[RMDB]
RNA sequence: GGGAACGACUCGAGUAGAGUCGAAAACAUUGCAGCUUCGGCUGCAAUGAAUCUCUGGUCUCUACGACUCUACUCGAUAGAGGCUGGAGUAGUCGUUCCGGAUGGCGCCCCAAUUCGUUGGGGCGAACAUUACUGCGAUGUUCGCAUCGCAGUAAUGAAAAGAAACAACAACAACAAC
Reactivity to 2A3 in 0.01 (KOAc 150mM, MgCl2 10mM, bicine 150mM(pH8.5), 24C), signal-to-noise 1, nucleotides 027 to 126: c010a000u010u000g000c000a010g010c000u050u100c220g160g000c000u000g010c000a000a000u000g000a010a010u030c040u020c040u070g040g030u040c040u010c050u110a130c070g000a010c010u000c000u000a020c010u020c040g000a010u000a010g010a010g020g000c040u060g080g040a030g030u070a000g000u020c010g000u000u010c020c010g000g100a110u110g090g040c000g000c000c000c000c000a000a010u030u060c120g070u050u000g000g000g000g000c000g010a000a000
Reactivity to DMS in 0.01 (KOAc 150mM, MgCl2 10mM, bicine 150mM(pH8.5), 24C), signal-to-noise 2, nucleotides 027 to 126: c000a010u010u000g000c000a000g020c000u000u010c190g030g020c010u000g000c010a010a000u000g000a120a080u000c080u000c060u000g010g010u010c020u000c060u000a120c060g010a000c020u000c000u000a000c020u000c010g020a110u000a030g000a060g000g010c030u000g000g010a070g020u000a030g000u000c000g000u000u000c000c000g010g000a080u000g010g040c010g000c010c010c000c000a000a010u000u030c190g000u000u000g000g000g000g000c010g000a020a030